Chemical mapping of a 177-nucleotide RNA with DMS and 2A3. For 2A3 the reverse transcriptase was SuperScript II with manganese. The reactions ran in a buffer of 150 mM KOAc, 10 mM MgCl2 and 150 mM bicine (pH 8.5), at 24 C. Reactivities are given for positions 27 through 126. It was measured as part of the RMDB library OK2TRN. For DMS the reverse transcriptase was MarathonRT.
RNA sequence: GGGAACGACUCGAGUAGAGUCGAAAAGUUCAGACUGCCCAGUGCUAACCAAACCACUUACAGAUGAAUACUUGGAAAUUGAACCCCUAAAGAAUGGGAGUUAUUUGGUUUUAUCAAGUACUACAGACUAGUGUAAGUACUUCGGUACUUACACUAGAAAAGAAACAACAACAACAAC
Reactivity to DMS in 0.01 (KOAc 150mM, MgCl2 10mM, bicine 150mM(pH8.5), 24C), signal-to-noise 6, nucleotides 027 to 126: g010u000u000c100a080g000a120c040u000g010c020c030c040a060g010u010g020c060u000a050a130c120c120a060a110a140c180c040a040c080u000u010a100c120a070g000a160u000g000a100a080u000a010c020u000u000g000g000a020a020a040u000u000g000a030a070c100c000c000c020u010a070a080a150g000a150a110u010g010g000g000a060g020u000u010a090u000u000u000g010g000u000u000u000u000a070u010c020a010a020g010u000a050c090u010a070c100a080g010a180
Reactivity to 2A3 in 0.01 (KOAc 150mM, MgCl2 10mM, bicine 150mM(pH8.5), 24C), signal-to-noise 4, nucleotides 027 to 126: g000u020u080c030a050g030a160c030u050g010c030c000c010a010g000u040g000c030u040a030a100c020c030a080a050a060c030c010a020c030u100u140a050c050a060g080a180u050g060a190a080u020a070c010u010u020g000g050a010a020a030u020u020g020a030a050c000c000c000c020u060a140a150a090g190a110a060u100g010g010g030a130g040u100u080a070u080u030u030g010g010u000u050u010u000a150u080c010a010a010g010u000a030c030u070a070c040a040g110a060